Annotation: Structure probing data (2A3 and DMS) for a 177-nucleotide construct. It was measured as part of the RMDB library OK1LIB. For 2A3, 47,191 sequencing reads were counted. For 2A3 the reverse transcriptase was SuperScript II with manganese.
RNA sequence: GGGAACGACUCGAGUAGAGUCGAAAACGUCGUGAACUAGCGACAAUGCAUUAGGUCCAUCGUUAUCUAACCGAAACAUCGUGACUAGUGUUAGAAUAGAACCACGAGAGGACGCUGGCAAACAAAGACGGACGGUAUUAUUCGUAGUACCGUCCGUAAAAGAAACAACAACAACAAC
Reactivity to 2A3 in 0.01 (KOAc 150mM, MgCl2 10mM, bicine 150mM(pH8.5), 24C), signal-to-noise 9, nucleotides 027 to 126: c060g000u000c000g020u040g070a180a100c080u040a090g010c000g000a000c000a020a050u050g000c010a030u030u130a030g000g020u000c000c000a010u010c010g010u020u050a050u040c010u000a000a010c020c010g050a060a060a030c050a110u190c080g120u120g110a070c080u070a080g020u010g010u150u000a010g010a050a080u110a090g110a090a060c080c020a010c040g020a020g040a160g030g000a010c040g000c030u000g000g000c000a010a050a010c050a020a110a010g130
Reactivity to DMS in 0.01 (KOAc 150mM, MgCl2 10mM, bicine 150mM(pH8.5), 24C), signal-to-noise 9, nucleotides 027 to 126: c120g000u000c010g010u000g000a130a110c170u020a170g010c000g010a020c020a130a130u020g010c010a020u020u030a020g010g010u000c010c010a110u000c020g000u000u000a150u010c000u000a020a040c160c020g000a130a100a070c080a070u030c140g010u020g010a090c120u020a080g010u020g020u000u000a100g000a040a170u020a060g010a060a100c230c160a020c010g000a020g000a100g000g000a010c000g000c010u000g000g000c020a050a100a090c150a060a090a070g010